[RMDB]
RNA sequence: GGGAACGACUCGAGUAGAGUCGAAAAAUGGUGACCUUCGGGUCACCAUGGUGCGUAGCUGCGUUAAUUUAAUAGCUUCGCUUAAUAAAUUUAAUUAACGCAAUGGAGCCUGCUUCGGCAGGCUCAAAUUAUCUUGGAGUUUCGACUCCAAGAUAAUAAAAGAAACAACAACAACAAC
Reactivity to 2A3 in 0.01 (KOAc 150mM, MgCl2 10mM, bicine 150mM(pH8.5), 24C), signal-to-noise 1, nucleotides 027 to 126: a020u000g020g020u000g010a010c000c050u040u070c260g050g000g020u000c030a000c000c000a000u000g020g030u050g020c080g050u100a070g000c040u010g010c030g010u020u000a040a000u030u090u110a170a140u080a060g020c000u080u100c150g030c050u060u170a170a090u150a170a240a030u080u140u080a000a000u040u000a000a000c000g010c010a030a040u090g060g020a020g000c000c040u000g000c000u020u050c150g020g000c010a000g030g030c010u010c040a000a000
Reactivity to DMS in 0.01 (KOAc 150mM, MgCl2 10mM, bicine 150mM(pH8.5), 24C), signal-to-noise 2, nucleotides 027 to 126: a000u000g000g020u000g000a010c000c000u000u000c180g020g020g030u010c000a010c000c000a000u000g000g000u000g010c060g010u000a070g030c070u000g010c000g010u000u000a000a010u000u000u010a060a080u010a090g000c020u000u000c140g010c020u000u010a070a120u010a060a100a120u010u000u000a040a020u000u000a020a010c010g000c010a160a110u010g010g000a020g010c000c020u010g010c000u000u000c220g000g020c010a010g000g010c000u000c000a000a040